[RMDB]
RNA sequence: GGGAACGACUCGAGUAGAGUCGAAAAUCGGCCGUUCGCGGCCGAAAAAUCCUAAGUCGGAAGCAUCGAUCGUGAACGGAGCUUGGACCUAUCGGAAACGAUAGCUAGCUCCGACACGGGAGCUUCCGAUAUGGAAAAACCCCUGUUUCGACAGGGGCAGAGAAAGAAUGUUCGCAUUCUUUCUCUGAAAAGAAACAACAACAACAAC
Reactivity to DMS in 0.01 (KOAc 150mM, MgCl2 10mM, bicine 150mM(pH8.5), 24C), signal-to-noise 1, nucleotides 027 to 156: u000c010g010g080c000c000g000u000u020c300g060c040g030g080c010c000g010a000a000a030a080a110u000c010c010u010a020a190g020u000c010g000g000a030a060g000c020a210u000c100g000a060u000c030g030u000g000a140a240c050g020g000a030g020c030u000u020g100g010a230c120c000u000a010u000c010g000g000a160a120a300c020g000a050u010a020g020c040u000a070g050c000u000c010c000g000a090c010a020c010g000g000g000a030g000c010u000u000c000c000g000a000u000a050u000g020g000a050a110a060a100a150c000c000c000c000u010g030u010u000u010c230g040a120c030a020g000g010g010g030
Reactivity to 2A3 in 0.01 (KOAc 150mM, MgCl2 10mM, bicine 150mM(pH8.5), 24C), signal-to-noise 4, nucleotides 027 to 156: u020c000g000g010c030c010g020u030u030c250g020c040g110g020c000c010g010a000a000a000a010a000u020c010c000u050a080a030g010u000c000g000g010a000a000g000c020a230u220c020g160a100u040c020g020u010g050a280a130c020g000g010a000g010c010u090u120g060g120a190c020c000u000a000u010c000g030g050a130a050a100c010g010a000u000a000g030c010u010a000g000c000u000c000c010g000a000c010a000c000g010g000g010a010g000c000u000u000c010c000g000a000u010a010u020g000g040a020a050a020a060a010c010c050c060c000u000g020u040u190u110c150g040a010c000a010g000g000g000g000
Structure probing data (DMS and 2A3) for a 207-nucleotide construct. It was measured as part of the RMDB library RNAMAK. Values cover nucleotides 27 to 156.